[RMDB]
RNA sequence: GGGAACGACUCGAGUAGAGUCGAAAAGAUAUGGAGAGGUUGGGAGAUCCGGUGUCGGAAACGACAUGCGGAUCGUCAAUGAAAUACCACCCUCUCCUAAGUCAAAACGUAUCCUUCGGGAUACGAAGCCACUAGUAUCGUUCGCGAUACUAGUGGCAAAAGAAACAACAACAACAAC
Reactivity to 2A3 in 0.01 (KOAc 150mM, MgCl2 10mM, bicine 150mM(pH8.5), 24C), signal-to-noise 1, nucleotides 027 to 126: g000a010u000a020u040g000g010a020g000a000g020g000u010u000g000g030g000a090g010a000u000c020c010g000g020u030g000u000c010g000g010a010a000a010c010g030a000c030a060u190g300c060g000g040a000u010c000g000u000c020a050a110u250g180a110a040a030u070a010c000c000a010c000c030c000u010c000u000c010c000u000a000a000g000u010c010a000a000a110a030c000g000u000a000u030c010c000u010u110c300g110g000g010a010u010a010c010g020a040a010
Reactivity to DMS in 0.01 (KOAc 150mM, MgCl2 10mM, bicine 150mM(pH8.5), 24C), signal-to-noise 1, nucleotides 027 to 126: g000a030u000a040u020g000g000a000g020a000g000g000u010u010g000g000g000a010g000a010u000c000c000g040g000u000g010u000c010g020g010a020a000a070c010g060a000c000a000u000g030c000g020g010a000u000c000g060u000c300a070a080u020g010a050a040a170u010a080c000c000a010c050c000c000u000c030u000c000c000u000a010a070g000u010c000a140a060a060a140c020g010u000a000u000c010c000u000u020c250g010g030g010a000u000a000c000g000a130a110